This 207-nucleotide RNA was probed chemically with 2A3 and DMS. The RNA was probed in 150 mM KOAc, 10 mM MgCl2 and 150 mM bicine (pH 8.5) at 24 C.

[RMDB]
RNA sequence: GGGAACGACUCGAGUAGAGUCGAAAACACUGUCAAAUUGCGGGGAAGCCCUAAAGAUUCAACUACUAAGCAGCUUGUGGAAACACAGCUGUGGCCGAGUUAAUAGCCCUGGGUAUAGUAACAAUGUUGAAUAUGAAUCUUGAUUGAAGAUGAAAUGCUUGCAAAUAGAGUUCGCUCUAUUUGCAAGAAAAGAAACAACAACAACAAC
Reactivity to 2A3 in 0.01 (KOAc 150mM, MgCl2 10mM, bicine 150mM(pH8.5), 24C), signal-to-noise 2, nucleotides 027 to 156: c020a000c010u030g010u080c030a050a060a190u130u090g020c060g010g000g000g010a040a060g030c010c000c020u090a080a060a070g080a020u060u020c010a040a000c010u070a010c000u030a010a040g000c010a000g000c000u250u300g010u000g010g050a010a020a000c000a000c000a000g020c020u000g000u000g000g000c010c000g060a020g060u040u070a030a090u060a100g010c020c010c020u110g000g000g000u110a160u020a220g030u020a030a040c020a010a010u050g010u060u000g030a000a020u040a030u050g080a020a030u040c060u040u120g050a150u190u090g030a100a000g000a000u140g040a030a070a150u210g010
Reactivity to DMS in 0.01 (KOAc 150mM, MgCl2 10mM, bicine 150mM(pH8.5), 24C), signal-to-noise 1, nucleotides 027 to 156: c040a090c040u010g010u030c010a110a100a120u010u010g040c060g000g060g060g010a210a160g030c020c010c030u000a090a080a160g010a080u000u010c000a000a060c010u000a010c030u000a110a240g020c000a000g030c010u010u050g090u000g000g010a290a100a240c000a000c000a010g020c020u000g000u000g010g020c050c030g010a040g020u000u030a030a200u000a100g030c020c010c010u010g020g000g000u000a070u010a030g100u000a100a050c060a040a090u000g010u000u000g000a060a040u000a150u010g010a040a070u010c030u000u010g000a160u020u000g000a030a130g020a080u010g000a110a070a120u000g000